[RMDB]
RNA sequence: GGGAACGACUCGAGUAGAGUCGAAAAGAGUUUGCACUCGUUUUUAACAACUUUGACUUCAGCAUCACGAAAUUCGCACUUGCACAAUACCAGCUAUGUGCCAACGGCAACGAGCUAGAACCAGACCUGCACGGCGUUUUCAUUAAACAACUGUGUAGUAAUAGCCGUCAUUCGUGACGGCUAUUACAAAAGAAACAACAACAACAAC
Reactivity to 2A3 in 0.01 (KOAc 150mM, MgCl2 10mM, bicine 150mM(pH8.5), 24C), signal-to-noise 4, nucleotides 027 to 156: g040a010g010u000u080u130g030c080a040c020u030c040g030u020u010u050u110u210a140a050c090a030a060c040u110u050u140g020a040c010u060u060c100a050g040c030a090u060c040a040c090g090a070a140a180u180u100c040g000c030a030c050u040u050g020c020a020c010a110a120u070a250c040c050a050g000c010u070a020u230g010u040g010c070c030a100a030c050g030g000c020a030a050c030g010a000g010c020u040a030g000a050a010c000c010a000g010a070c010c010u000g000c010a000c000g030g000c000g010u000u020u020u090c070a060u090u250a070a060a030c030a020a050c070u080g030u020g020u070a050
Reactivity to DMS in 0.01 (KOAc 150mM, MgCl2 10mM, bicine 150mM(pH8.5), 24C), signal-to-noise 1, nucleotides 027 to 156: g000a140g000u020u000u000g100c170a090c000u000c010g000u000u020u020u030u000a100a130c030a060a080c020u000u000u010g000a110c040u010u000c110a070g040c030a050u010c090a190c090g020a020a090a090u000u000c050g030c000a040c120u000u000g020c020a090c100a100a150u000a100c050c110a100g050c060u000a070u010g040u000g000c000c030a030a180c090g040g000c040a080a170c000g010a160g010c080u000a060g020a120a080c080c030a180g010a120c040c030u010g000c020a000c010g050g000c020g000u000u000u000u000c270a120u010u000a060a080a060c030a030a030c010u000g030u030g010u000a100
Background:
An RNA of 207 nucleotides, treated with 2A3 and DMS and read out base by base. For 2A3 the reverse transcriptase was SuperScript II with manganese. It was measured as part of the RMDB library OK3TST. The RNA was probed in 150 mM KOAc, 10 mM MgCl2 and 150 mM bicine (pH 8.5) at 24 C. Values cover nucleotides 27 to 156.